RNA sequence: GGGAACGACUCGAGUAGAGUCGAAAAGCUUAUCACGAUAGGAUGCAGCUGUGCAACAGCAACGCACAAACCGCGACAAACUGCUCGACGGCGCUCUGGCUUGUUUACGAGAACGCGGCUACGGCAAACCCGAGUUAACCUUCGGGUUAACUCGGGUAAAAGAAACAACAACAACAAC
Reactivity to 2A3 in 0.01 (KOAc 150mM, MgCl2 10mM, bicine 150mM(pH8.5), 24C), signal-to-noise 3, nucleotides 027 to 126: g020c040u150u120a060u210c070a020c160g100a100u140a120g100g050a080u050g030c020a040g000c020u020g000u040g210c010a060a020c000a080g100c010a060a070c080g030c020a000c050a040a060a000c020c030g020c000g020a030c090a000a220a040c070u080g030c070u060c010g110a070c010g090g050c050g040c020u020c020u040g090g000c080u150u180g040u000u050u090a130c080g020a050g020a150a000c010g010c000g040g000c020u110a030c160g000g000c030a050a010
Reactivity to DMS in 0.01 (KOAc 150mM, MgCl2 10mM, bicine 150mM(pH8.5), 24C), signal-to-noise 1, nucleotides 027 to 126: g000c010u000u060a140u040c090a130c130g000a130u040a120g070g090a130u000g020c000a040g000c000u080g000u000g020c210a060a080c060a020g020c110a020a010c220g000c000a000c060a050a050a050c130c020g050c000g010a050c150a010a050a080c140u000g000c090u000c020g000a030c090g000g000c010g100c010u000c000u010g000g000c040u010u000g000u000u000u040a060c020g050a160g000a000a080c000g020c010g000g040c010u000a030c060g000g040c040a070a120